[RMDB]
RNA sequence: GGGAACGACUCGAGUAGAGUCGAAAAGGAGAGUAGAUGAUUCGCGUUAAGUGUGUGUGACUGGGAUGUCGUCACACAACGAAGCGAGAGCGCGGUGAAUCAUAGCAUCAGCUCCAAAGAAAGAAAAAUCCUAGUAAUCGUUCGCGAUUACUAGGAUAAAAGAAACAACAACAACAAC
Reactivity to DMS in 0.01 (KOAc 150mM, MgCl2 10mM, bicine 150mM(pH8.5), 24C), signal-to-noise 6, nucleotides 027 to 126: g010g000a020g000a080g000u010a090g000a030u000g010a020u000u000c010g000c000g010u010u050a100a120g030u030g010u010g000u000g010u010g020a010c000u020g010g020g010a050u020g010u010c190g000u000c010a000c000a000c000a030a000c060g000a140a120g010c030g000a190g000a140g000c000g000c060g010g030u010g000a040a010u000c010a020u000a100g000c080a080u000c060a140g000c000u000c000c020a090a090a140g010a090a060a100g020a010a050a070a060
Reactivity to 2A3 in 0.01 (KOAc 150mM, MgCl2 10mM, bicine 150mM(pH8.5), 24C), signal-to-noise 7, nucleotides 027 to 126: g050g010a040g000a010g060u180a030g020a070u030g000a000u010u020c010g000c000g020u040u060a200a050g040u080g000u000g000u000g000u010g160a010c030u080g020g060g130a130u130g130u210c030g010u020c000a000c000a000c000a000a020c020g040a080a030g020c050g040a040g010a010g030c020g000c020g000g100u070g060a020a010u010c010a030u020a050g080c020a040u060c020a030g030c000u000c010c010a040a080a020g100a020a040a010g140a010a090a050a000
Chemical mapping of a 177-nucleotide RNA with DMS and 2A3. Values cover nucleotides 27 to 126. The 2A3 profile rests on 8,096 reads. The RNA was probed in 150 mM KOAc, 10 mM MgCl2 and 150 mM bicine (pH 8.5) at 24 C. Source: RMDB library OK1LIB, as collected in RNAgym.